[RMDB]
An RNA of 177 nucleotides, treated with DMS and read out base by base. It was measured as part of the RMDB library TTRINS.

RNA sequence: GGGAACGACUCGAGUAGAGUCGAAAAGAUAUGGACCCUCAGGAUCAUACUGGCGUUGAAAUUAUAAACUUUCUCGGAAACGAGAAAGUUUAUAAUGGAGCCAAUAUGAGAAUUUGGGUCCUAAGUCCACCUUAUAAGUCUUCGGACUUAUAAGGUGAAAAGAAACAACAACAACAAC
Reactivity to DMS in 0.01 (KOAc 150mM, MgCl2 10mM, bicine 150mM(pH8.5), 24C), signal-to-noise 3, nucleotides 027 to 126: g010a100u000a300u020g000g020a020c000c000c000u000c060a030g010g010a300u000c000a000u000a010c050u000g010g020c000g030u000u020g020a180a120a030u000u050a010u000a000a000a020c000u000u000u000c000u020c000g010g000a100a090a300c020g010a010g000a010a010a020g000u000u000u000a000u000a010a000u010g010g010a090g000c000c000a010a000u000a000u000g010a020g010a300a300u010u000u000g000g010g010u010c010c000u010a000a070g010u000c020